Record summary: This 177-nucleotide RNA was probed chemically with DMS. Source: RMDB library OK2TST, as collected in RNAgym. DMS (dimethyl sulfate) methylates the pairing face of unpaired adenines and cytosines. For DMS the reverse transcriptase was MarathonRT. The DMS profile rests on 2,193 reads.
RNA sequence: GGGAACGACUCGAGUAGAGUCGAAAACGGGGACGCCCGCCGCCAGAAACCCCUCCAGGGCCGAAAGGUAGUGCGUGCAGUGCGAGGGCGUGAACCCAGCGUCGAUCAGGGUGUUGAUCACCACGGAAUAAACCUUACACUUCGGUGUAAGGUUUAUAAAAGAAACAACAACAACAAC
Reactivity to DMS in 0.01 (KOAc 150mM, MgCl2 10mM, bicine 150mM(pH8.5), 24C), signal-to-noise 3, nucleotides 027 to 126: c090g020g000g000g000a130c070g000c000c010c010g020c110c010g020c020c020a110g000a130a190a150c030c010c010c030u000c130c130a120g030g020g000c000c030g000a080a100a100g000g010u000a030g030u010g000c040g000u010g010c040a070g020u000g020c020g000a250g010g000g010c020g000u000g000a100a170c020c000c000a180g020c050g020u000c060g010a080u010c050a120g010g010g010u000g000u000u010g010a070u010c020a080c040c050a100c090g010g000a120